This 170-nucleotide RNA was probed chemically with 2A3 and DMS.
The RNA was probed in 150 mM KOAc, 10 mM MgCl2 and 150 mM bicine (pH 8.5) at 24 C.
[RMDB]
RNA sequence: GGGAACGACUCGAGUAGAGUCGAAAAGGUCAUACAAUUAUGCUGUGUCUAGUGCCUUCUGGUUAUUCACCCACAUUCCAAUGGCGGGUUUGGUACGAAUGUAUAAUUUGUUAGCAUGCCUUUGGCUCACCCACAACGUUCGCGUUGUGGAAAAGAAACAACAACAACAAC
Reactivity to 2A3 in 0.01 (KOAc 150mM, MgCl2 10mM, bicine 150mM(pH8.5), 24C), signal-to-noise 9, nucleotides 027 to 129: g010g000u090c020a010u040a100c020a030a040u040u020a010u070g010c010u030g030u030g070u150c050u090a050g030u010g070c020c000u090u110c070u110g130g040u160u140a120u160u180c040a040c010c030c000a020c010a060u240u190c040c040a140a050u040g030g020c050g050g020g000u090u090u090g020g000u020a010c020g050a130a070u110g020u010a030u000a050a050u050u090u100g050u030u050a050g040c050a040u110g000c000c000u010u010u020g060g000c010u010c020a040c010
Reactivity to DMS in 0.01 (KOAc 150mM, MgCl2 10mM, bicine 150mM(pH8.5), 24C), signal-to-noise 9, nucleotides 027 to 129: g000g000u020c080a090u060a030c010a050a030u020u020a000u020g000c020u050g000u050g020u060c090u020a110g000u020g000c020c010u020u050c080u070g040g010u020u010a120u050u010c100a050c000c000c000a080c100a060u030u070c130c140a030a020u030g020g020c110g020g000g040u040u030u000g030g000u000a020c000g020a080a050u040g000u000a030u000a040a040u030u020u090g020u030u030a090g020c170a080u050g000c010c020u000u000u000g040g060c080u020c050a070c140
For 2A3, 66,409 sequencing reads were counted.